[RMDB]
RNA sequence: GGGAACGACUCGAGUAGAGUCGAAAAGACGCCUGGUAUUUCGCGAAUUAUGACCCUCGCAUGAAGCGAGAAGGCAUUCACCAUGUGGUUGUAGAGCGCGACGACAAAUACAUGUCCGACUUCAACGAAAUGGUGCCGGAGUUCAUCAGCAAGAUGGUACAUAUGGAACAUUCGUGUUCCAUAUGUAAAAAGAAACAACAACAACAAC
Reactivity to 2A3 in 0.01 (KOAc 150mM, MgCl2 10mM, bicine 150mM(pH8.5), 24C), signal-to-noise 9, nucleotides 027 to 156: g090a020c070g080c080c030u020g020g010u040a050u010u060u030c040g000c030g030a070a060u200u090a050u240g120a250c010c000c000u000c010g010c040a090u210g260a180a030g000c000g000a010g020a030a100g010g000c010a010u050u050c020a010c000c010a000u020g060u080g180g000u030u010g010u010a030g030a090g100c050g030c160g040a010c010g020a010c090a070a160a020u230a090c130a080u210g010u000c000c010g010a030c000u010u020c020a010a010c010g050a130a020a030u010g000g000u000g010c000c000g020g010a020g010u070u080c040a040u010c010a030g030c040a080a090g050a070u130g070g040
Reactivity to DMS in 0.01 (KOAc 150mM, MgCl2 10mM, bicine 150mM(pH8.5), 24C), signal-to-noise 4, nucleotides 027 to 156: g010a140c050g010c040c020u000g030g020u000a060u000u000u010c040g040c020g010a100a100u000u000a050u000g000a150c000c000c010u000c020g040c010a170u010g010a200a300g010c010g000a030g020a060a050g000g010c010a070u010u000c040a050c040c010a050u020g040u000g030g030u000u000g020u010a090g010a100g020c030g000c000g030a040c030g020a290c080a060a070a130u010a040c130a110u000g010u000c020c020g020a040c020u000u000c010a020a090c010g000a050a070a090u000g020g030u000g020c030c020g000g010a080g030u000u000c060a070u010c030a100g020c060a060a130g010a120u000g020g010
Structure probing data (2A3 and DMS) for a 207-nucleotide construct. High 2A3 reactivity points to a flexible backbone, as in loops and unpaired stretches. The data come from the RNA Mapping Database (RMDB), library OK3TST. Conditions: 150 mM KOAc, 10 mM MgCl2 and 150 mM bicine (pH 8.5), 24 C. For DMS, 12,080 sequencing reads were counted. For 2A3, 8,681 sequencing reads were counted. For 2A3 the reverse transcriptase was SuperScript II with manganese.